[RMDB]
RNA sequence: GGGAACGACUCGAGUAGAGUCGAAAACUGUCACCUCUGCGUGAUUGCAAGUGAACAGUGCCCCUGUGGAAGAGCUCUAUAGUGUAAAGUGUAAAUAAAAAUAGCUAUUAUUCAAUUAGAUUAGGCUCAGACACACUGUAUUCGUACAGUGUGUCUGAAAAGAAACAACAACAACAAC
Reactivity to DMS in 0.01 (KOAc 150mM, MgCl2 10mM, bicine 150mM(pH8.5), 24C), signal-to-noise 2, nucleotides 027 to 126: c010u020g000u000c000a020c000c030u000c010u010g000c000g020u010g000a120u080u070g010c000a000a130g000u000g020a060a040c000a020g020u000g020c060c010c000c070u020g000u010g000g020a130a100g010a040g000c050u000c020u020a050u010a090g010u010g020u000a050a040a060g040u010g000u000a020a060a140u020a060a050a100a080a070u010a170g000c010u000a030u000u000a050u010u000c020a100a140u010u010a080g010a070u000u030a110g020g000c050u000
Reactivity to 2A3 in 0.01 (KOAc 150mM, MgCl2 10mM, bicine 150mM(pH8.5), 24C), signal-to-noise 4, nucleotides 027 to 126: c000u000g000u000c010a000c000c000u000c010u020g010c000g080u130g150a190u170u200g020c000a110a100g000u000g020a080a000c010a000g000u010g010c000c000c000c000u060g020u100g080g040a090a040g000a100g020c010u000c000u090a050u050a040g080u060g030u050a020a140a080g030u060g060u150a110a150a050u200a060a060a130a000a000u120a060g000c010u020a090u200u010a090u100u090c060a110a080u040u170a150g050a140u060u070a010g020g010c030u010